Annotation
The record gives the reactivity of an RNA of 207 nucleotides to DMS and 2A3. 2A3 adducts were read by reverse transcription with SuperScript II with manganese. Conditions: 150 mM KOAc, 10 mM MgCl2 and 150 mM bicine (pH 8.5), 24 C. The 2A3 profile rests on 5,976 reads. High DMS reactivity at an A or C suggests that its Watson-Crick edge is free. High 2A3 reactivity points to a flexible backbone, as in loops and unpaired stretches.
RNA sequence: GGGAACGACUCGAGUAGAGUCGAAAAUCCACUAUGAAUCUAGUCACUAAAUAAACACAAUUAGCUACUGUGUGUAAUAGUGAGUGUCGAUAACACAAAAUAAUAGUAUAGUUUUGGAAGAUUAUACGCGCCCUUGCUCCGUUCGCGGAGCAAGGAACGGUAAUAAUAUGUUCGCAUAUUAUUACCGAAAAGAAACAACAACAACAAC
Reactivity to DMS in 0.01 (KOAc 150mM, MgCl2 10mM, bicine 150mM(pH8.5), 24C), signal-to-noise 3, nucleotides 027 to 156: u000c010c010a100c120u000a120u010g020a150a130u010c040u000a150g020u010c000a040c020u000a020a020a080u010a160a200a020c010a010c010a000a010u010u000a290g020c200u000a080c070u000g020u000g000u000g000u020a120a250u000a020g030u000g000a080g030u000g010u000c030g020a140u000a090a160c030a050c030a090a030a070a120u010a040a260u000a110g000u000a070u000a070g010u000u010u000u040g020g020a160a180g000a060u000u010a030u000a010c000g010c080g050c050c000c000u000u000g020c010u000c000c000g040u010u030c300g040c040g060g010a020g010c000a000a000g000g010a000a010
Reactivity to 2A3 in 0.01 (KOAc 150mM, MgCl2 10mM, bicine 150mM(pH8.5), 24C), signal-to-noise 7, nucleotides 027 to 156: u010c030c000a030c070u190a180u210g130a110a060u050c080u080a040g090u030c010a000c000u010a020a050a040u040a020a050a010c010a000c010a040a100u120u080a090g090c070u180a070c050u030g010u000g000u000g000u040a030a030u010a030g000u000g010a020g020u050g040u050c050g060a070u130a250a030c040a000c030a070a170a080a040u200a100a090u080a140g030u020a020u010a060g020u010u010u080u140g100g040a100a040g010a070u040u040a010u040a050c070g050c020g080c080c000c000u000u010g000c000u000c010c010g010u040u020c070g000c010g110g000a000g010c000a000a000g000g000a000a010